[RMDB]
RNA sequence: GGGAACGACUCGAGUAGAGUCGAAAACUGCGCUGAGCCCUUCUCCCCCAGCUUGCCUGUGUCCUAGGGAAUUGGAAGGUCAUCCUUCACAGGAUCGUGUGGAAGUCCUGCUCGGGGUGGAAGCAUUAUAAACCUUAGACGUUCGCGUCUAAGGUAAGUUUCAACAAUACUUCGGUAUUGUUGAAACAAAAGAAACAACAACAACAAC
Reactivity to DMS in 0.01 (KOAc 150mM, MgCl2 10mM, bicine 150mM(pH8.5), 24C), signal-to-noise 2, nucleotides 027 to 156: c020u010g000c030g020c020u010g000a160g000c060c000c020u000u000c020u000c030c010c000c010c020a140g000c040u000u020g000c010c010u000g000u010g020u010c020c040u010a160g020g030g010a090a200u010u020g000g020a090a040g020g000u010c070a100u000c040c010u000u010c090a060c020a050g010g000a020u000c040g020u010g040u010g020g010a100a100g010u000c010c010u000g010c040u000c060g010g010g010g050u020g010g010a110a040g040c040a070u000u000a110u000a110a090a080c000c000u000u000a000g010a030c000g030u010u000c300g000c030g020u000c000u010a010a010g000g020u000a010a040
Reactivity to 2A3 in 0.01 (KOAc 150mM, MgCl2 10mM, bicine 150mM(pH8.5), 24C), signal-to-noise 4, nucleotides 027 to 156: c030u090g030c070g010c130u140g050a040g050c000c020c050u060u060c050u050c000c000c000c000c000a000g030c010u040u070g030c000c050u020g000u020g020u090c000c020u030a050g000g020g050a050a090u140u100g070g030a050a020g020g000u100c040a090u100c010c000u050u040c050a040c000a050g050g020a050u060c060g070u080g000u060g150g010a060a020g020u040c010c030u010g010c010u020c040g000g000g000g000u050g010g040a030a000g000c000a020u050u140a140u230a180a120a020c000c010u000u000a000g010a000c000g010u030u020c110g040c010g070u010c000u000a000a010g000g000u000a000a000